[RMDB]
About this RNA: Conditions: 150 mM KOAc, 10 mM MgCl2 and 150 mM bicine (pH 8.5), 24 C. This 177-nucleotide RNA was probed chemically with DMS and 2A3. Values cover nucleotides 27 to 126.

RNA sequence: GGGAACGACUCGAGUAGAGUCGAAAACGGGUCGCAUUGGUUCUGGAAGCUGCCUCUGGUCGUGGUUGGCUCGGUGGUCGGCGCGCUACUUCUCGACCGAGAAGUUCGGAGCAUCUACCGAUGCGUGUGACUGGUCAGAAUUCGUUCUGACCAGUCAAAAAGAAACAACAACAACAAC
Reactivity to DMS in 0.01 (KOAc 150mM, MgCl2 10mM, bicine 150mM(pH8.5), 24C), signal-to-noise 4, nucleotides 027 to 126: c070g000g000g020u010c030g020c040a050u000u000g000g000u010u010c100u010g000g010a120a130g000c040u010g000c040c010u000c060u020g000g000u010c050g010u000g030g000u020u020g020g010c040u000c060g000g010u010g000g010u000c030g000g010c030g010c060g010c060u000a040c010u010u000c010u000c010g010a110c270c160g010a010g000a050a030g000u000u010c080g020g010a130g000c020a100u010c030u020a060c100c050g010a010u000g020c010g010u000g000
Reactivity to 2A3 in 0.01 (KOAc 150mM, MgCl2 10mM, bicine 150mM(pH8.5), 24C), signal-to-noise 5, nucleotides 027 to 126: c030g000g010g130u060c000g000c030a020u030u040g030g000u080u040c030u110g070g000a110a030g030c030u060g070c010c000u030c070u060g050g000u020c010g030u030g080g040u070u120g050g000c020u030c080g060g020u060g000g030u090c040g010g020c010g000c010g000c010u030a030c010u030u050c000u000c010g210a260c180c030g000a010g000a010a000g000u030u060c050g030g020a030g010c000a030u040c020u070a060c000c020g010a010u040g010c000g020u050g030